[RMDB]
RNA sequence: GGGAACGACUCGAGUAGAGUCGAAAACCGUUGGCAGGAGGCGUGAGGAAUCCGUCUCUCUGUCUGGUGCGGCAAGGUAGUUCUGGGUCCUUAGGGGCUCCACCUUCACCGCUGUUAGGGGAGUUUUAUCCAGCGUCAGCAAAGGUGACCCGUGAUGCCCUCUCUUUAUCUUCGGAUAAAGAGAGGGAAAAGAAACAACAACAACAAC
Reactivity to 2A3 in 0.01 (KOAc 150mM, MgCl2 10mM, bicine 150mM(pH8.5), 24C), signal-to-noise 1, nucleotides 027 to 156: c010c000g070u210u090g000g020c030a000g000g000a010g000g000c020g060u300g030a030g020g290a110a090u000c010c000g040u000c000u000c000u010c000u000g000u000c030u010g000g160u130g000c020g020g000c030a040a070g010g040u110a080g070u150u110c180u100g020g010g000u000c010c000u040u150a190g050g000g020g000c030u020c000c000a010c000c000u150u110c070a120c020c040g000c070u060g030u060u200a100g000g080g000g000a060g030u030u090u200u210a110u040c010c010a000g010c020g120u090c030a000g000c080a140a050a000g020g030u020g040a210c020c010c040g040u100g000a050u110g010
The record gives the reactivity of an RNA of 207 nucleotides to 2A3. Reactivities are given for positions 27 through 156. The 2A3 profile rests on 562 reads. The reactions ran in a buffer of 150 mM KOAc, 10 mM MgCl2 and 150 mM bicine (pH 8.5), at 24 C. It was measured as part of the RMDB library ARCHII.